[RMDB]
RNA sequence: GGGAACGACUCGAGUAGAGUCGAAAAGAUAUGGAUUACUGGAGACGUGCUCCUUUAACACGUUUGACGGAUUUCGGAAACGAAAUCCCGAGUGUGAGGAGCACGUCGUUGAAAGUAAUCCUAAGUCCUAACAUCGUUCGUUCGCGAACGAUGUUAGAAAAGAAACAACAACAACAAC
Reactivity to DMS in 0.01 (KOAc 150mM, MgCl2 10mM, bicine 150mM(pH8.5), 24C), signal-to-noise 2, nucleotides 027 to 126: g000a080u000a300u020g000g010a010u000u010a000c000u000g000g010a060g020a030c000g020u000g000c000u000c010c030u000u010u020a250a030c010a000c000g020u040u000u000g030a210c300g000g000a020u010u010u010c000g000g000a160a170a190c020g000a010a020a000u000c010c000c010g010a040g010u000g030u000g020a050g020g000a060g000c000a000c000g020u000c000g010u000u010g000a110a080a030g000u010a010a010u000c070c020u030a020a100g000u000c050